[RMDB]
RNA sequence: GGGAACGACUCGAGUAGAGUCGAAAAGGCUGUUGAAAUACAUUCCUGUGCCGGCAAUACACUGUGUAUGGAGGUCUCAAUGGCUCGGAAGUGCCAGCAAACCGGCGUAGAUAUUAGCAGACGUAUGAUAGGAUGCAUCCGUUCGCGGAUGCAUCAACCUAUAGUCAUCGUUCGCGAUGACUAUAGGAAAAGAAACAACAACAACAAC
Reactivity to DMS in 0.01 (KOAc 150mM, MgCl2 10mM, bicine 150mM(pH8.5), 24C), signal-to-noise 3, nucleotides 027 to 156: g000g010c010u020g010u000u000g000a090a080a110u000a050c070a150u010u010c050c020u000g030u000g000c010c020g000g000c030a050a150u000a070c100a070c020u000g000u010g050u010a070u000g000g010a210g010g010u000c040u000c160a070a130u000g030g010c010u010c050g010g030a300a160g010u000g030c010c000a040g030c050a050a120a080c010c010g010g020c010g010u000a020g000a090u000a090u010u000a080g010c070a060g010a070c060g030u000a060u000g010a180u000a120g030g010a000u000g000c000a010u000c000c000g010u000u010c270g020c000g020g000a020u000g000c010a000u000c010a010a070
Reactivity to 2A3 in 0.01 (KOAc 150mM, MgCl2 10mM, bicine 150mM(pH8.5), 24C), signal-to-noise 5, nucleotides 027 to 156: g080g010c040u020g030u070u050g060a080a070a040u150a060c040a090u100u090c020c010u040g040u060g010c010c010g000g000c040a040a010u080a100c070a020c070u050g040u030g010u230a030u050g060g030a030g010g040u000c030u010c060a140a210u210g010g000c070u080c110g000g050a080a020g020u010g010c000c000a010g000c060a030a030a040c000c010g000g010c010g020u020a030g020a100u070a040u130u170a040g000c010a000g020a080c040g090u150a090u180g120a110u120a090g160g010a000u000g000c000a000u020c000c000g020u020u040c200g010c020g080g000a000u000g000c000a000u000c000a000a000